[RMDB]
RNA sequence: GGGAACGACUCGAGUAGAGUCGAAAAAAUCAAUACUGAUUAAGUAUGUAUCAAUAGAAAAGUGAGGGGAAGUUUUUCGGCAUUGUGUGUUUUGAGAUACUAUACAAUCAAUCGAAGGGGUGGAUCACAGCACUCUCAAUUUCGAUUGAGAGUGCUGAAAAGAAACAACAACAACAAC
Reactivity to 2A3 in 0.01 (KOAc 150mM, MgCl2 10mM, bicine 150mM(pH8.5), 24C), signal-to-noise 3, nucleotides 027 to 126: a000a000u200c140a100a020u090a010c050u080g110a150u270u090a250a000g050u000a020u020g040u000a060u020c080a150a110u080a180g080a020a040a000a030g110u140g050a110g010g000g000g030a000a030g010u010u000u060u090u050c020g000g010c010a040u050u120g020u000g010u010g000u060u050u080u130g180a100g000a000u060a050c050u090a030u010a110c110a000a030u090c000a000a020u050c050g050a030a020g040g000g040g000u040g010g000a000u060c030a000
Reactivity to DMS in 0.01 (KOAc 150mM, MgCl2 10mM, bicine 150mM(pH8.5), 24C), signal-to-noise 3, nucleotides 027 to 126: a030a030u010c050a070a060u010a040c070u000g000a110u030u090a060a030g010u020a000u000g000u000a070u010c100a140a110u020a110g000a100a020a080a080g020u010g010a060g030g000g000g010a070a050g010u010u020u000u000u010c080g000g000c150a030u010u030g000u000g000u010g020u000u020u050u010g020a140g000a070u000a030c070u010a020u010a000c060a090a040u000c070a040a050u010c070g000a040a090g010g000g060g020u010g000g010a040u020c150a170
An RNA of 177 nucleotides, treated with 2A3 and DMS and read out base by base. It was measured as part of the RMDB library OK1LIB.